Structure probing data (2A3 and DMS) for a 177-nucleotide construct. The data come from the RNA Mapping Database (RMDB), library TTRDEL.

[RMDB]
RNA sequence: GGGAACGACUCGAGUAGAGUCGAAAAGAUAUGGACAUGGAACUACAAGCGAACAAGCGUUGAAAUCGGAAACGAUGGAGCUUGCUAACUUGCCAUGUCCUAAGUCAAACCCGAGUUCGCUCGGGAACGGAAGAGAAUUGUUCGCAAUUCUCUUCCGAAAAGAAACAACAACAACAAC
Reactivity to 2A3 in 0.01 (KOAc 150mM, MgCl2 10mM, bicine 150mM(pH8.5), 24C), signal-to-noise 2, nucleotides 027 to 126: g050a010u080a040u110g010g020a010c010a010u010g000g000a050a000c030u140a060c300a010a000g000c000g060a050a000c020a010a000g000c020g290u300u090g050a020a040a000u020c000g010g000a040a060a050c010g000a000u010g000g010a020g000c000u000u030g040c000u010a030a000c000u000u020g000c000c010a000u000g000u000c010c010u000a000a000g010u000c030a030a040a160c000c000c000g010a010g000u110u180c300g000c080u010c020g000g010g010a050a050
Reactivity to DMS in 0.01 (KOAc 150mM, MgCl2 10mM, bicine 150mM(pH8.5), 24C), signal-to-noise 2, nucleotides 027 to 126: g000a070u010a300u020g000g000a000c000a000u000g000g000a140a030c070u030a300c030a000a030g030c080g010a120a210c010a000a020g000c010g000u010u030g000a080a160a030u000c000g000g000a120a140a210c000g010a040u020g000g000a110g000c010u010u010g020c030u000a050a040c000u000u000g010c000c000a000u010g010u000c000c010u000a030a100g010u010c060a050a110a120c020c000c020g000a020g010u000u010c300g030c000u000c000g040g000g000a010a030